Structure probing data (2A3 and DMS) for a 177-nucleotide construct.
RNA sequence: GGGAACGACUCGAGUAGAGUCGAAAAAAUGCCACUGGGGAUUUUCUAAGUGAACAAAGAUAUGGAUGUUUGGGAAAGCAUCCACUUUGAGAAUUUACCAUAGAUAGCUGGCGUUAAGUUGUAAUGUGAUUAGUACAAUCUUCGGAUUGUACUAAUCAAAAGAAACAACAACAACAAC
Reactivity to 2A3 in 0.01 (KOAc 150mM, MgCl2 10mM, bicine 150mM(pH8.5), 24C), signal-to-noise 2, nucleotides 027 to 126: a010a000u010g000c000c000a020c050u010g040g030g000g020a010u050u030u000u010c000u020a040a140g070u050g160a090a040c030a080a100a020g080a140u240a080u150g010g000a000u000g060u030u080u000g120g000g020a090a060a000g030c010a010u030c010c000a020c000u010u010u000g030a010g000a010a020u030u010u040a240c010c000a020u060a070g140a070u170a020g030c150u000g000g000c000g000u010u010a070a050g010u010u020g070u030a110a100u080g000u050
Reactivity to DMS in 0.01 (KOAc 150mM, MgCl2 10mM, bicine 150mM(pH8.5), 24C), signal-to-noise 1, nucleotides 027 to 126: a050a040u010g000c010c020a080c010u010g020g030g000g010a070u000u000u000u000c040u020a190a170g000u020g000a160a300c060a030a050a050g000a140u000a070u010g020g000a000u000g020u010u000u000g000g040g000a110a020a040g000c010a010u000c010c010a040c010u000u010u000g000a090g000a080a030u000u000u010a070c030c000a090u040a110g000a190u020a050g010c140u000g000g000c020g020u000u010a100a190g000u000u000g000u020a060a150u020g010u020
Overview:
For 2A3, 1,546 sequencing reads were counted.